[RMDB]
RNA sequence: GGGAACGACUCGAGUAGAGUCGAAAACAGAGGCCCGACUUUCGGUCUCCGGUCCUCCACGCCGCCCUUCUGGUGGGAGGGUGGCUCCAUCAGUCUCGGGCCCGAAAUGAACUUACCUGGGAAACUCGCCUUUGGGGAGAGUGGGUUCUAGGAGCCCAUAAUAAUAGGCAUUCGUGCCUAUUAUUAUAAAAGAAACAACAACAACAAC
Reactivity to DMS in 0.01 (KOAc 150mM, MgCl2 10mM, bicine 150mM(pH8.5), 24C), signal-to-noise 1, nucleotides 027 to 156: c050a170g010a090g030g050c040c020c020g000a140c100u000u040u010c020g070g010u000c000u000c020c020g050g010u020c010c000u000c030c020a090c260g040c010c010g000c010c020c000u000u000c020u000g030g000u000g010g000g010a010g040g040g050u000g050g050c010u000c020c020a070u010c080a210g010u000c030u000c020g030g030g010c150c000c010g000a040a070a110u000g000a070a080c020u000u000a070c060c010u010g010g020g000a130a090a080c010u010c010g010c000c010u000u000u000g050g010g000g020a060g020a040g030u000g010g000g020u000u000c000u010a120g030g000a070g030c020c010c000
Reactivity to 2A3 in 0.01 (KOAc 150mM, MgCl2 10mM, bicine 150mM(pH8.5), 24C), signal-to-noise 2, nucleotides 027 to 156: c030a040g070a180g010g030c010c030c030g050a060c020u190u260u170c090g020g040u030c050u040c060c010g040g040u030c020c000u050c040c010a060c080g000c010c000g000c020c010c020u040u050c060u190g120g010u140g080g000g000a000g000g000g000u000g010g010c010u020c000c010a130u130c040a030g090u000c050u030c100g010g030g010c000c000c000g070a080a060a060u170g010a020a020c030u060u070a120c040c030u030g020g000g060a090a140a010c020u010c070g030c000c030u100u240u240g010g000g020g030a070g000a010g000u040g000g000g030u050u000c020u040a090g020g010a030g020c000c000c000

The record gives the reactivity of an RNA of 207 nucleotides to DMS and 2A3. The DMS profile rests on 2,423 reads. Conditions: 150 mM KOAc, 10 mM MgCl2 and 150 mM bicine (pH 8.5), 24 C. For 2A3 the reverse transcriptase was SuperScript II with manganese.